[RMDB]
Chemical mapping of a 177-nucleotide RNA with 2A3 and DMS. For 2A3, 334 sequencing reads were counted. The data come from the RNA Mapping Database (RMDB), library OK1LIB. The reactions ran in a buffer of 150 mM KOAc, 10 mM MgCl2 and 150 mM bicine (pH 8.5), at 24 C.
RNA sequence: GGGAACGACUCGAGUAGAGUCGAAAAGUGAGGUGAUGUAUUGUCCUGAUAUAGGGUACCAGUAUAAUAUAAAGACUAUCAAGAGCACCAGGGCGUGCGAGAAUACUGUGUAUGACAUAGACGGCCCCGUUUCGCAAGGGUUCGCCCUUGCGAAACGAAAAGAAACAACAACAACAAC
Reactivity to 2A3 in 0.01 (KOAc 150mM, MgCl2 10mM, bicine 150mM(pH8.5), 24C), signal-to-noise 1, nucleotides 027 to 126: g000u040g060a100g030g000u040g000a140u100g130u090a210u070u170g000u000c000c090u040g050a080u040a080u200a230g080g000g000u000a000c000c000a000g010u000a000u030a160a000u100a000u090a000a210a030g110a000c000u090a110u300c130a080a000g030a090g080c000a000c020c010a010g220g060g000c080g000u050g030c090g030a110g000a000a000u010a000c060u000g060u060g000u100a060u040g110a000c010a000u100a030g050a040c040g110g000c030c040c000
Reactivity to DMS in 0.01 (KOAc 150mM, MgCl2 10mM, bicine 150mM(pH8.5), 24C), signal-to-noise 1, nucleotides 027 to 126: g000u030g000a070g090g020u000g020a200u000g000u000a050u030u070g000u000c000c000u040g000a220u000a000u000a140g000g000g000u000a000c000c000a050g000u000a000u000a010a300u000a120u070a030a070a060g000a010c230u070a120u050c280a000a000g020a070g030c000a000c160c000a210g010g000g000c120g000u020g000c090g000a100g000a040a000u070a050c000u000g000u000g050u000a000u000g000a150c100a020u000a000g000a220c080g000g000c070c040c000